[RMDB]
RNA sequence: GGGAACGACUCGAGUAGAGUCGAAAAACAUCUCACUGGGAAGUGAGAUGUGAGUCCGCAUGGGAAUGCGGACGGUCGAUUAGACAUUUAACCAAUAUGUCUAGAGGAGAACGAGAUGUACGGGAGUAGAUCGAGUUCUGCUCGCAGAAUUGGCAGCGUGUAGAGGUGUAUUCGUACACCUCUGCACAAAAGAAACAACAACAACAAC
Reactivity to 2A3 in 0.01 (KOAc 150mM, MgCl2 10mM, bicine 150mM(pH8.5), 24C), signal-to-noise 4, nucleotides 027 to 156: a000c000a000u000c000u010c000a000c000u020g010g030g080a090a000g000u000g000a000g000a000u000g000u000g000a000g000u000c010c000g000c000a020u030g060g000g080a130a030u010g000c000g000g000a000c000g010g030u050c020g030a100u040u080a040g000a010c020a010u050u040u090a030a010c010c000a000a010u030a010u020g010u000c030u040a020g000a000g020g010a010g000a000a000c010g000a000g000a010u010g020u130a000c010g040g010g050a110g010u000a010g000a030u010c010g000a000g000u010u000c000u010g030c000u000c010g000c010a020g050a090a060u020u010g020g010c030a040g050c020
Reactivity to DMS in 0.01 (KOAc 150mM, MgCl2 10mM, bicine 150mM(pH8.5), 24C), signal-to-noise 4, nucleotides 027 to 156: a030c000a000u000c000u000c000a010c000u000g020g030g010a300a030g030u000g010a020g010a000u000g000u000g010a120g030u000c000c000g010c000a020u000g020g020g000a300a050u000g010c020g030g020a010c010g000g000u000c060g000a120u000u000a110g020a090c030a100u010u000u010a120a040c060c020a000a060u000a040u000g010u000c040u000a080g010a070g030g000a050g020a050a050c020g010a300g000a060u000g020u000a080c000g020g030g010a280g030u010a060g000a010u000c000g020a300g020u000u000c010u000g020c000u000c010g000c040a040g000a080a060u000u000g010g020c020a100g000c160